[RMDB]
RNA sequence: GGGAACGACUCGAGUAGAGUCGAAAACUUUUUCCUAUGCAUAUACUUCUUUGAGAAUUGCUUCUAAAGAGGUAUAGGGCAUGGGAAAAUGGGGCAAAAAAGGCAUAGCAACUUCGGUUGCUAUGCCCACCCUCAUACGGUUCGCCGUAUGAGGGUGAAAAGAAACAACAACAACAAC
Reactivity to DMS in 0.01 (KOAc 150mM, MgCl2 10mM, bicine 150mM(pH8.5), 24C), signal-to-noise 1, nucleotides 027 to 126: c040u000u000u000u010u000c000c000u000a020u000g000c000a120u000a000u000a000c000u020u000c000u000u000u000g000a050g010a020a050u010u030g010c290u000u010c000u010a020a000a000g000a010g000g000u000a000u000a010g010g000g000c000a000u010g000g030g000a000a000a010a020u000g000g000g020g010c300a000a010a050a080a070a040g000g000c010a010u000a010g010c000a010a010c000u010u010c230g030g010u010u000g010c000u010a000u000g000c000c000
Reactivity to 2A3 in 0.01 (KOAc 150mM, MgCl2 10mM, bicine 150mM(pH8.5), 24C), signal-to-noise 1, nucleotides 027 to 126: c010u030u060u000u030u010c000c000u030a000u000g010c000a000u000a000u000a000c000u030u000c000u060u050u100g200a020g010a090a040u280u210g100c090u110u000c000u050a000a000a000g000a000g000g000u000a000u010a000g010g180g000c000a000u010g020g000g080a010a010a000a010u060g000g000g050g050c060a000a040a000a070a070a100g000g000c000a010u010a000g020c000a000a010c010u120u040c260g120g010u020u000g000c010u000a000u000g000c000c000
Chemical mapping of a 177-nucleotide RNA with DMS and 2A3. 2A3 is a SHAPE reagent: it acylates the 2'-hydroxyl of flexible nucleotides of all four kinds. It was measured as part of the RMDB library RFMREP. For DMS, 1,313 sequencing reads were counted. 2A3 adducts were read by reverse transcription with SuperScript II with manganese.